[RMDB]
RNA sequence: GGGAACGACUCGAGUAGAGUCGAAAAUCCUCUCGCCCCAAUUAUGCGCAGGCGCGCAUCACCGAAGUGUUACCGCCCACGCAUUCCCGCGCGCGCCCAUUCGGCACGCCCUCCUCCUCGACCCGCGGUUAUAAAUUUGAUUCGUCAAAUUUAUAACAAAAGAAACAACAACAACAAC
Reactivity to 2A3 in 0.01 (KOAc 150mM, MgCl2 10mM, bicine 150mM(pH8.5), 24C), signal-to-noise 9, nucleotides 027 to 126: u010c000c000u030c020u020c030g030c000c000c000c010a040a100u180u080a050u150g040c040g000c040a040g110g030c040g000c000g000c050a020u040c010a020c020c050g090a140a030g030u040g050u120u080a050c010c020g020c000c010c000a020c020g020c010a030u040u040c010c010c010g020c000g000c000g000c000g000c010c000c000a040u090u090c010g030g000c020a010c020g010c000c000c000u020c000c000u010c000c000u020c010g060a070c000c010c010g030c020g040
Reactivity to DMS in 0.01 (KOAc 150mM, MgCl2 10mM, bicine 150mM(pH8.5), 24C), signal-to-noise 9, nucleotides 027 to 126: u010c010c000u000c060u000c050g010c020c010c010c050a080a100u020u020a050u010g010c050g020c050a130g010g010c110g020c060g010c050a060u010c090a050c050c100g010a080a090g010u010g000u010u010a100c090c040g000c020c010c030a090c070g000c060a120u000u010c030c010c010g020c110g010c040g020c040g010c020c010c060a120u010u010c080g010g010c040a050c070g000c030c010c010u000c020c010u000c010c010u000c040g000a100c020c000c010g020c100g010